Structure probing data (2A3) for a 177-nucleotide construct. Values cover nucleotides 27 to 126. Conditions: 150 mM KOAc, 10 mM MgCl2 and 150 mM bicine (pH 8.5), 24 C.
RNA sequence: GGGAACGACUCGAGUAGAGUCGAAAAUGCUUGGAUUUUACUAUUGGAUUUUGCUGCCGGAAUAGGGCUUUCGGGACACUUAUUCCUUUGCUUAAGACCAACUCUGUUUUCGCCUUUGCCCCUUCAUGUGUACCCUACUCUUCGGAGUAGGGUACACAAAAGAAACAACAACAACAAC
Reactivity to 2A3 in 0.01 (KOAc 150mM, MgCl2 10mM, bicine 150mM(pH8.5), 24C), signal-to-noise 1, nucleotides 027 to 126: u200g000c080u030u140g040g010a100u060u070u180u140a040c070u000a080u020u070g060g000a050u040u030u000u150g030c030u000g030c000c060g000g000a090a100u140a140g000g020g000c000u020u100u060c090g070g000g000a000c010a000c040u000u030a020u040u030c020c000u030u150u150g040c020u070u000a040a020g050a020c010c010a000a070c050u000c040u080g100u050u000u060u100c010g020c000c000u010u070u080g020c010c000c000c000u000u120c030a090u110